Chemical mapping of a 177-nucleotide RNA with DMS and 2A3. Conditions: 150 mM KOAc, 10 mM MgCl2 and 150 mM bicine (pH 8.5), 24 C. It was measured as part of the RMDB library VIROID. The 2A3 profile rests on 763 reads.
RNA sequence: GGGAACGACUCGAGUAGAGUCGAAAAGGACGAGUGAGGCUUAUCCCGGAGCAUUCGACUUAUCGUCCCCACAUAGCAGAACCCCGGACCCCCUCCAAAAGUGACCGAGGGAGGCGCUUGGAUCGCGGCAUUUAAAUUAGUUCGCUAAUUUAAAUGCAAAAGAAACAACAACAACAAC
Reactivity to DMS in 0.01 (KOAc 150mM, MgCl2 10mM, bicine 150mM(pH8.5), 24C), signal-to-noise 2, nucleotides 027 to 126: g020g010a030c020g010a010g010u000g030a060g030g010c030u010u010a110u010c000c010c010g000g010a070g020c030a110u000u010c080g000a190c060u000u000a120u000c010g010u010c010c020c040c040a080c130a110u000a100g000c060a060g010a110a160c060c020c020c020g010g000a240c020c020c010c010c010u010c030c040a060a060a090a140g020u010g000a060c060c060g000a080g000g030g010a090g000g030c110g000c040u000u000g010g000a100u010c030g000c080g020
Reactivity to 2A3 in 0.01 (KOAc 150mM, MgCl2 10mM, bicine 150mM(pH8.5), 24C), signal-to-noise 1, nucleotides 027 to 126: g030g000a030c000g020a000g040u120g030a080g000g080c020u050u040a040u100c070c040c000g020g000a030g000c010a110u150u100c050g080a050c060u090u030a050u250c020g010u020c070c000c000c000a060c040a060u200a030g040c050a020g000a110a050c000c000c000c060g020g050a100c070c020c040c010c020u000c040c000a100a050a030a100g050u070g070a110c030c010g000a050g060g030g050a050g130g000c040g090c140u100u090g020g020a040u060c000g000c000g110